RNA sequence: GGGAACGACUCGAGUAGAGUCGAAAAUGGUAGUCCGCCACUCUAAGGGGACGCCUUUAGACGAAGAGGCUAGGUGGUAUUCCGGUGUGGGAUACUUGGUAAUAUGUAACGCUAAUUGCAUAAGAUUAAAACUUUGCAUACUUCGGUAUGCAAAGAAUCAUCCAUUCUGGUUCGCCAGAAUGGAUGAAAAAGAAACAACAACAACAAC
Reactivity to 2A3 in 0.01 (KOAc 150mM, MgCl2 10mM, bicine 150mM(pH8.5), 24C), signal-to-noise 3, nucleotides 027 to 156: u100g000g030u020a070g020u010c040c020g080c180c000a060c050u170c040u080a110a130g000g010g000g010a030c010g040c000c000u040u030u060a050g010a030c000g010a070a010g010a020g070g020c020u040a020g000g120u010g050g010u040a060u040u050c030c040g060g050u140g040u100g060g020g000a030u050a060c020u000u050g010g010u050a070a080u040a070u100g050u050a050a020c030g000c120u060a040a120u080u070g000c020a050u070a110a090g010a130u130u200a020a100a060a010c000u000u010u000g000c010a000u000a000c000u010u030c040g080g000u010a010u000g000c010a000a000a000g000a000a010
Reactivity to DMS in 0.01 (KOAc 150mM, MgCl2 10mM, bicine 150mM(pH8.5), 24C), signal-to-noise 2, nucleotides 027 to 156: u000g010g000u000a050g030u000c010c020g020c050c040a100c070u000c050u010a030a060g030g000g040g010a140c110g000c010c010u000u000u000a050g000a050c050g000a170a040g040a140g010g010c010u000a040g030g030u000g010g030u000a060u000u000c040c010g030g030u000g030u000g060g000g020a090u010a010c020u030u000g020g050u000a080a090u000a100u020g000u010a040a080c120g010c130u010a070a110u000u000g010c010a050u000a040a170g000a180u000u010a070a110a200a100c010u010u000u000g000c000a020u000a010c000u000u000c280g070g030u000a000u000g000c000a000a000a010g010a050a100
Structure probing data (2A3 and DMS) for a 207-nucleotide construct. DMS adducts were read by reverse transcription with MarathonRT. For DMS, 3,760 sequencing reads were counted. For 2A3 the reverse transcriptase was SuperScript II with manganese.